[RMDB]
RNA sequence: GGGAACGACUCGAGUAGAGUCGAAAAUUUUAGUAGGUUCUGCAUCUAAAUCAAUUUAUGGUGAAAACAUCUGGAACCCGUUAGACUUGCUUAAGAGCUUUUUAGAUCAUUCAAAUCACCAUGGAGAAGUAAAUAAUGCAUUCGUGCAUUAUUUACUAAAAGAAACAACAACAACAAC
Reactivity to 2A3 in 0.01 (KOAc 150mM, MgCl2 10mM, bicine 150mM(pH8.5), 24C), signal-to-noise 1, nucleotides 027 to 126: u000u030u030u060a050g000u030a040g020g140u090u050c080u090g020c000a080u000c000u100a080a070a120u050c030a030a040u070u090u100a020u050g000g000u000g010a070a010a040a000c010a030u050c020u060g030g040a050a050c000c000c030g020u010u030a040g040a080c030u030u050g040c010u100u080a080a020g060a040g150c000u040u060u000u070u090a080g010a080u030c020a050u180u220c000a030a060a000u010c020a010c010c000a000u000g000g000a110g000a040
Reactivity to DMS in 0.01 (KOAc 150mM, MgCl2 10mM, bicine 150mM(pH8.5), 24C), signal-to-noise 3, nucleotides 027 to 126: u000u010u000u010a100g010u020a120g010g010u000u000c040u000g020c050a070u000c040u000a050a080a080u010c110a080a110u010u010u000a010u010g000g010u000g000a040a080a130a150c140a040u010c020u000g010g010a040a070c030c020c030g000u000u000a100g010a150c060u000u000g000c080u000u000a060a070g020a060g000c070u010u000u000u000u000a030g000a020u000c090a080u010u000c150a030a070a130u000c000a020c030c000a020u000g000g010a050g010a120

About this RNA:
Chemical mapping of a 177-nucleotide RNA with 2A3 and DMS. 2A3 adducts were read by reverse transcription with SuperScript II with manganese. The DMS profile rests on 1,976 reads. The RNA was probed in 150 mM KOAc, 10 mM MgCl2 and 150 mM bicine (pH 8.5) at 24 C.